The record gives the reactivity of an RNA of 177 nucleotides to 2A3. The RNA was probed in 150 mM KOAc, 10 mM MgCl2 and 150 mM bicine (pH 8.5) at 24 C.

RNA sequence: GGGAACGACUCGAGUAGAGUCGAAAACGUCCUAGUUUCGACUAGGACGAAAUUAAAUCAGCGGUAAAUAAUCGAGGCGUAUUACCGCUGAACGCCUCGAUAAAAUGCGAUGAUUCGUCAUCGCAAAGACUAGACGGAUCUUCGGAUCCGUCUAGUCAAAAGAAACAACAACAACAAC
Reactivity to 2A3 in 0.01 (KOAc 150mM, MgCl2 10mM, bicine 150mM(pH8.5), 24C), signal-to-noise 1, nucleotides 027 to 126: c010g010u000c000c000u000a000g000u070u120u020c250g030a020c000u000a000g000g000a020c000g000a000a000a030u100u090a050a040a020u040c010a010g030c010g200g090u150a080a140a090u200a110a050u170c000g010a000g000g020c000g020u000a070u060u130a090c000c000g000c000u000g030a010a000c000g010c020c000u010c000g000a020u120a060a120a010a010u050g000c000g010a000u010g010a010u090u000c150g060u000c020a030u010c000g010c010a000a060a000